Conditions: 150 mM KOAc, 10 mM MgCl2 and 150 mM bicine (pH 8.5), 24 C.
This 170-nucleotide RNA was probed chemically with 2A3 and DMS.
For DMS, 11,797 sequencing reads were counted.
The 2A3 profile rests on 3,478 reads.
It was measured as part of the RMDB library 15KLIB.
RNA sequence: GGGAACGACUCGAGUAGAGUCGAAAAUUCAUUGAGUGUGGAAGUUGUGGUAAUGAUUCCUGGCUUACAGGGAAUGCUAUCCAAGGGUUUGCCUGUGGAUGUGGGGCAUCAUAUACAGCUAAUGAUGGGAGUACACCCUUCGGGGUGUACAAAAGAAACAACAACAACAAC
Reactivity to 2A3 in 0.01 (KOAc 150mM, MgCl2 10mM, bicine 150mM(pH8.5), 24C), signal-to-noise 3, nucleotides 027 to 129: u040u020c000a020u000u080g010a010g020u010g010u060g030g020a140a030g040u020u050g000u020g020g050u040a030a070u080g050a020u070u000c000c000u010g010g020c050u090u150a100c010a020g020g000g010a070a060u080g070c000u080a030u070c000c000a020a030g100g000g000u030u050u100g130c030c000u080g020u050g050g010a120u080g040u030g060g040g010g010c000a000u020c000a010u050a010u020a020c040a040g000c030u030a090a020u090g120a040u010g040g050g000a040
Reactivity to DMS in 0.01 (KOAc 150mM, MgCl2 10mM, bicine 150mM(pH8.5), 24C), signal-to-noise 1, nucleotides 027 to 129: u040u020c060a110u040u040g060a000g060u000g010u000g000g060a060a070g040u010u050g040u020g030g000u030a000a000u000g010a100u000u020c000c030u030g000g030c150u060u060a080c050a060g000g000g040a040a060u010g020c000u040a070u010c090c030a110a040g000g030g080u000u000u000g010c060c010u020g020u000g060g020a060u030g020u040g000g000g000g000c040a020u010c040a050u000a040u030a110c140a050g000c100u080a050a080u030g010a070u030g020g030g010a280